[RMDB]
Source: RMDB library OK1LIB, as collected in RNAgym. An RNA of 177 nucleotides, treated with 2A3 and DMS and read out base by base. 2A3 adducts were read by reverse transcription with SuperScript II with manganese. The RNA was probed in 150 mM KOAc, 10 mM MgCl2 and 150 mM bicine (pH 8.5) at 24 C. For 2A3, 1,452 sequencing reads were counted. The DMS profile rests on 1,534 reads.
RNA sequence: GGGAACGACUCGAGUAGAGUCGAAAAUGCUUGGACCAGUCUGGAGGUUGCAUCGUUAGCCUGGUUCAGGGUCGGCGACACAACUUCCUGAACCCGGCGGCACCGACAAAGGUGGUCAGUGGUCAUAGGCUGCGAUCACGUUCGCGUGAUUGCAGCCAAAAGAAACAACAACAACAAC
Reactivity to 2A3 in 0.01 (KOAc 150mM, MgCl2 10mM, bicine 150mM(pH8.5), 24C), signal-to-noise 3, nucleotides 027 to 126: u090g000c000u120u140g150g020a070c000c000a010g070u060c000u010g030g000a050g010g030u180u200g020c000a090u050c140g110u110u130a060g000c000c000u020g020g010u030u040c000a000g030g010g000u160c070g000g110c030g090a010c020a020c000a300a040c010u040u050c000c000u000g030a000a010c000c000c000g000g050c080g000g000c000a000c000c000g070a010c020a040a160a010g050g040u020g020g030u000c030a060g040u040g040g020u050c070a070u030a150
Reactivity to DMS in 0.01 (KOAc 150mM, MgCl2 10mM, bicine 150mM(pH8.5), 24C), signal-to-noise 1, nucleotides 027 to 126: u080g010c000u010u020g020g000a040c000c010a110g000u050c020u040g000g040a170g000g000u020u060g020c050a170u000c170g020u020u030a080g040c000c000u000g000g000u000u010c060a000g000g010g020u020c210g000g000c020g000a140c180a070c180a020a210c080u000u020c000c000u000g070a000a010c000c010c050g000g000c040g000g000c000a000c000c000g000a140c100a150a050a170g060g000u020g000g000u000c020a010g000u000g000g000u010c040a030u000a260